[RMDB]
RNA sequence: GGGAACGACUCGAGUAGAGUCGAAAACUUGCACGGCGAUCACCUCGGCCUGAUACCUGGGCCGGGUUCGGAGCCAGGGGAGUCGCGCCUCUACCAGCCCGGUGACGAUGUCCGCCGGAUGGACUGGAGAGGCAGUCAGAUUCGUCUGACUGCCUCUAAAAGAAACAACAACAACAAC
Reactivity to 2A3 in 0.01 (KOAc 150mM, MgCl2 10mM, bicine 150mM(pH8.5), 24C), signal-to-noise 1, nucleotides 027 to 126: c030u020u150g050c130a070c180g040g020c010g080a150u130c040a020c050c020u050c060g010g000c000c000u000g030a090u150a300c060c090u170g020g050g050c000c000g000g000g020u040u020c070g070g020a010g000c020c000a020g000g020g000g000a030g020u000c000g000c000g000c030c000u060c010u050a110c000c030a000g060c010c000c010g040g010u020g010a030c060g170a190u300g070u130c150c050g000c000c000g020g000a030u050g020g060a150c020u060g000g000
Reactivity to DMS in 0.01 (KOAc 150mM, MgCl2 10mM, bicine 150mM(pH8.5), 24C), signal-to-noise 2, nucleotides 027 to 126: c040u000u000g020c140a140c130g000g010c000g000a160u010c080a100c040c000u000c030g020g000c010c020u010g020a210u030a090c210c170u010g000g000g030c000c010g000g000g010u000u000c100g010g000a280g000c000c000a200g010g000g000g000a080g000u000c030g000c300g010c010c020u000c090u010a280c020c020a040g010c050c000c010g000g000u000g020a070c000g020a210u020g000u000c060c000g030c000c010g000g010a130u020g040g000a060c020u010g000g010